[RMDB]
RNA sequence: GGGAACGACUCGAGUAGAGUCGAAAAGAAAGAAAAGAAAAGAAAACCGGGGAUCUUUCCCUGCUAGUGUAGAUCCCUGUAAAAACAAUUGUGCAACACUAGCAGUGCACAUAAAAGAAAAAGAAAAGAUUUUAAUACGAUUCGUCGUAUUAAAAUCAAAAGAAACAACAACAACAAC
Reactivity to 2A3 in 0.01 (KOAc 150mM, MgCl2 10mM, bicine 150mM(pH8.5), 24C), signal-to-noise 2, nucleotides 027 to 126: g020a000a100a000g060a020a160a050a000g070a050a160a020a000g020a020a190a050a010c230c000g020g000g000g000a010u000c000u040u050u010c150c100c000u000g020c000u000a000g000u010g010u040a030g000a020u000c000c000c000u010g040u110a080a120a050a010a010c030a030a050u160u180g190u180g080c030a020a010c000a010c010u050a000g000c000a000g040u060g070c020a040c040a090u180a100a040a070a020g110a050a110a030a010a000g150a020a030a040a020
Notes
The data come from the RNA Mapping Database (RMDB), library OK1LIB. An RNA of 177 nucleotides, treated with 2A3 and read out base by base. The RNA was probed in 150 mM KOAc, 10 mM MgCl2 and 150 mM bicine (pH 8.5) at 24 C. The 2A3 profile rests on 774 reads.